[RMDB]
RNA sequence: GGGAACGACUCGAGUAGAGUCGAAAAGGAUGAAAAUUCGAAAAUGGAGAAAUCAGUAAUACAAGGAUUAUUUCAACAAGGGGUACAUUUCAUAAUUCUUCCACUUUCAAGCUUCUAUAAUUAAAUUCAGGGACUGUAAUGAUAGCAUAAUGAACCCGAAGUAGUAAAACUUCGGUUUUACUACUUCAAAAGAAACAACAACAACAAC
Reactivity to DMS in 0.01 (KOAc 150mM, MgCl2 10mM, bicine 150mM(pH8.5), 24C), signal-to-noise 1, nucleotides 027 to 156: g010g000a110u000g000a110a050a080a120u010u010c050g030a040a000a070a070u000g050g010a110g030a080a060a050u000c050a090g070u020a050a110u000a040c020a100a060g010g010a050u000u000a060u020u000u000c040a080a040c070a070a080g000g040g000g020u010a060c030a100u000u020u040c040a120u040a040a080u000u010c010u010u020c030c050a050c020u010u000u010c050a100a100g020c050u000u000c020u030a110u000a020a100u010u000a040a100a130u020u020c050a100g000g020g050a030c030u000g010u010a070a070u000g010a090u000a040g000c060a090u000a100a100u000g000a040a150c050c080c080
Reactivity to 2A3 in 0.01 (KOAc 150mM, MgCl2 10mM, bicine 150mM(pH8.5), 24C), signal-to-noise 2, nucleotides 027 to 156: g020g000a000u080g050a050a050a050a020u180u090c030g010a070a000a030a060u100g050g000a060g030a030a070a020u040c020a010g040u090a050a080u040a110c030a020a020g020g010a010u010u010a000u040u210u110c080a080a060c010a060a040g190g030g000g000u080a020c020a060u040u110u160c030a030u080a150a060u090u020c010u040u000c030c020a060c010u010u130u060c040a060a020g000c010u040u000c060u180a110u080a140a080u180u170a160a120a070u120u080c020a000g060g000g000a030c010u010g010u030a070a000u040g020a050u020a020g040c000a010u090a150a080u180g030a020a000c000c060c040